[RMDB]
The record gives the reactivity of an RNA of 177 nucleotides to 2A3. 2A3 adducts were read by reverse transcription with SuperScript II with manganese. The RNA was probed in 150 mM KOAc, 10 mM MgCl2 and 150 mM bicine (pH 8.5) at 24 C. Values cover nucleotides 27 to 126.
RNA sequence: GGGAACGACUCGAGUAGAGUCGAAAAUUUUCUUUUGAUACCGCCGAAAUUUUAUGUUUUUUUUUCACCAGCACGCAAAAAAGCACGCGAAUCUAUGCCAAUCUUGUAGAACGUUAUAUGAGUACGGCCCAUAACGUGCAUUCGUGCACGUUAUGGGAAAAGAAACAACAACAACAAC
Reactivity to 2A3 in 0.01 (KOAc 150mM, MgCl2 10mM, bicine 150mM(pH8.5), 24C), signal-to-noise 2, nucleotides 027 to 126: u030u020u090u060c000u000u080u010u020g060a050u110a160c020c000g030c030c020g070a070a050a060u170u120u100u060a110u060g110u000u000u000u000u000u000u000u000u000c030a080c020c020a000g010c050a010c030g040c090a030a010a010a010a010a010g050c020a030c000g070c050g020a050a040u150c080u100a010u130g000c000c060a030a090u040c000u040u100g070u070a010g060a100a030c040g040u090u030a230u030a060u230g050a020g020u020a000c050g050g000